[RMDB]
RNA sequence: GGGAACGACUCGAGUAGAGUCGAAAAGUGGAAGGCGGGGAGACGGGGAUCCCGGGCUUACCCACGGGAACUGCUGGGUUCCCCUGAUGUCCAGUCCCUCCCCGUUCCUGGAGAAGGGAGACUCGGGCUCCUAGAAAGUGUUCGCACUUUCUAGGAGAAAAGAAACAACAACAACAAC
Reactivity to DMS in 0.01 (KOAc 150mM, MgCl2 10mM, bicine 150mM(pH8.5), 24C), signal-to-noise 1, nucleotides 027 to 126: g010u020g000g010a090a120g000g000c100g040g050g020g000a070g020a300c250g000g010g010g010a020u000c050c020c020g020g000g030c070u010u020a100c040c030c050a090c230g070g000g010a040a060c210u000g010c070u000g000g020g000u000u000c000c020c000c010u000g000a080u010g030u050c020c030a130g000u000c010c090c000u000c000c010c000c010g000u010u000c000c020u000g010g020a030g020a100a090g000g010g010a110g010a110c060u000c020g020g020g020